[RMDB]
RNA sequence: GGGAACGACUCGAGUAGAGUCGAAAAGGGGUCUCUAACUAGUACCUCAUUAUCAGCUUGGAUUUAGUUACUGAAGCCUCCACGGUAACUUGUCAGCUGUGUGAGGGAACGUUAGAGACGGAGGCACCCAAAACCGCGCUUGCUUCGGCAAGCGCGGGAUUGGUGUCUGGUUCGCCAGACACCAAUCAAAAGAAACAACAACAACAAC
Reactivity to 2A3 in 0.01 (KOAc 150mM, MgCl2 10mM, bicine 150mM(pH8.5), 24C), signal-to-noise 1, nucleotides 027 to 156: g150g000g000g010u000c000u010c000u000a000a000c010u000a010g000u010a010c000c070u020c010a000u140u300a060u190c020a020g040c050u190u300g140g000a070u210u300u270a010g010u000u010a000c000u000g060a120a040g030c000c000u020c020c000a000c000g030g000u000a000a000c000u020u040g010u010c020a000g000c010u040g020u000g000u000g040a000g000g010g000a000a000c000g010u000u000a000g000a000g000a000c000g000g000a010g000g020c000a000c010c000c000a030a040a000a080c000c060g000c000g030c030u020u010g030c010u050u060c260g100g000c000a050a000g080c000g000c080g000g000